[RMDB]
RNA sequence: GGGAACGACUCGAGUAGAGUCGAAAAGCGGCUCGCAUGAAGGUUCAACGAGAGUCCCACUGUCCCCACAUUCAGCCCCGUGAAAUUAAUGUACUGGUGCACAAUCCAGUCUCUCCCACAUGAAAGCGCCUCUAUAGAAGUUCGCUUCUAUAGAGGCAAAAGAAACAACAACAACAAC
Reactivity to DMS in 0.01 (KOAc 150mM, MgCl2 10mM, bicine 150mM(pH8.5), 24C), signal-to-noise 1, nucleotides 027 to 126: g030c040g000g000c040u010c040g020c100a160u010g010a160a140g010g010u010u000c030a060a150c040g020a110g000a070g000u000c060c020c010a070c060u000g030u010c020c040c030c020a040c080a100u000u010c060a150g020c010c030c040c020g020u000g000a030a060a040u010u000a100a050u020g030u000a000c010u050g000g010u000g030c200a070c240a070a100u000c010c000a030g000u000c030u010c050u000c000c040c000a120c160a050u010g000a000a090a200g030c300
Chemical mapping of a 177-nucleotide RNA with DMS. Source: RMDB library RFMREP, as collected in RNAgym. The reactions ran in a buffer of 150 mM KOAc, 10 mM MgCl2 and 150 mM bicine (pH 8.5), at 24 C. DMS adducts were read by reverse transcription with MarathonRT.